[RMDB]
RNA sequence: GGGAACGACUCGAGUAGAGUCGAAAAUCAACACUCAACUAAAGCGCAAUUGAUGAAGAUCGAUGUAAUAAAUCGAACGUUAUUGAAAUUUUCUGAAGCAUCAGAGAGCGAGGUGGGUGAUGCAUCAGUUGACUGCGUAUUUCGAUACGCAGUCAACAAAAGAAACAACAACAACAAC
Reactivity to DMS in 0.01 (KOAc 150mM, MgCl2 10mM, bicine 150mM(pH8.5), 24C), signal-to-noise 2, nucleotides 027 to 126: u080c120a060a110c040a060c050u030c000a010a090c010u020a020a080a080g000c010g000c000a210a110u020u000g040a040u020g000a030a100g010a050u000c000g000a020u050g030u010a170a040u080a150a090a080u010c060g000a020a090c040g000u000u000a030u010u030g010a010a100a130u000u020u050u040c030u000g000a080a180g050c120a060u040c000a060g060a050g040a090g030c000g030a020g000g010u000g000g030g000u030g000a060u000g010c220a060u000c030a060
Reactivity to 2A3 in 0.01 (KOAc 150mM, MgCl2 10mM, bicine 150mM(pH8.5), 24C), signal-to-noise 3, nucleotides 027 to 126: u040c010a010a030c000a000c010u010c000a010a160c020u050a110a080a180g070c000g030c050a060a130u020u080g010a020u090g050a030a050g120a100u030c010g020a030u020g080u140a050a120u030a200a090a000u080c050g020a060a070c020g050u040u030a040u100u150g100a150a190a150u140u090u070u010c010u050g030a060a000g070c000a040u030c000a010g000a040g000a020g110c020g030a030g030g020u060g000g010g000u000g010a020u060g020c020a020u020c070a020
This 177-nucleotide RNA was probed chemically with DMS and 2A3. The reactions ran in a buffer of 150 mM KOAc, 10 mM MgCl2 and 150 mM bicine (pH 8.5), at 24 C. Source: RMDB library OK1LIB, as collected in RNAgym.